[RMDB]
RNA sequence: GGGAACGACUCGAGUAGAGUCGAAAACACCAGAACCACGAGUCUGCCGAGUUGGCUCUCGACCACGCAGCCUGCAUCGGCUGUGGUGCUUGUGUGGCUGCUUGCCCUAACGGCGCAGCUCACUUGUUCACCGGUGCAAAGCUGAUCCACCUCUCCACAUAUCCAGCUCCUUCGGGAGCUGGAUAUGAAAAGAAACAACAACAACAAC
Reactivity to 2A3 in 0.01 (KOAc 150mM, MgCl2 10mM, bicine 150mM(pH8.5), 24C), signal-to-noise 1, nucleotides 027 to 156: c070a080c080c040a060g070a090a040c010c020a000c080g030a020g180u000c010u080g020c020c020g000a020g030u000u040g040g060c040u000c000u020c040g050a090c010c080a080c090g020c000a000g000c000c010u020g010c020a040u010c040g050g000c070u040g020u120g040g050u080g000c000u010u020g000u040g030u210g060g010c000u000g030c040u210u300g000c040c000c020u100a200a040c180g000g000c000g000c010a000g000c000u000c000a000c000u010u020g030u110u130c030a010c030c000g000g000u030g020c020a000a110a090g000c020u040g000a100u180c000c130a110c020c030u060c040u010c000c010a090